Chemical mapping of a 177-nucleotide RNA with 2A3 and DMS. Values cover nucleotides 27 to 126. The reactions ran in a buffer of 150 mM KOAc, 10 mM MgCl2 and 150 mM bicine (pH 8.5), at 24 C. Source: RMDB library RFMREP, as collected in RNAgym.
RNA sequence: GGGAACGACUCGAGUAGAGUCGAAAACAUUGUUCGACACCAUGGAUCCCCAGGUGGGUCACGUUUCAAGAUACACCAACCUGGAGGACUCCAUGCUGUUGAGCUGUUAGUCCGUCGUUCGCGACGGCCUUAUUGAGGUGUUCGCACCUCAAUAAGGAAAAGAAACAACAACAACAAC
Reactivity to 2A3 in 0.01 (KOAc 150mM, MgCl2 10mM, bicine 150mM(pH8.5), 24C), signal-to-noise 8, nucleotides 027 to 126: c040a070u120u170g000u010u000c010g010a000c000a000c020c000a000u000g000g000a010u010c010c000c000c000a000g000g010u020g020g010g040u070c080a030c160g040u040u210u230c140a150a060g030a130u110a090c050a030c040c010a050a090c000c010u020g010g020a190g080g000a030c040u000c000c000a000u000g010c010u010g000u010u000g000a000g000c010u030g060u070u090a080g060u020c010c010g000u000c000g020u020u090c200g000c010g100a000c000g010g000
Reactivity to DMS in 0.01 (KOAc 150mM, MgCl2 10mM, bicine 150mM(pH8.5), 24C), signal-to-noise 8, nucleotides 027 to 126: c040a070u010u010g010u000u000c000g010a010c000a010c170c010a000u000g000g000a100u000c000c000c000c000a010g010g010u000g000g000g010u000c140a080c200g010u000u010u010c280a130a130g000a090u000a110c170a060c000c000a030a020c000c000u000g000g000a110g020g000a010c160u000c000c000a010u000g010c210u000g010u000u000g010a020g010c000u000g010u000u010a090g010u010c000c000g010u000c000g020u000u010c210g020c010g010a010c000g000g000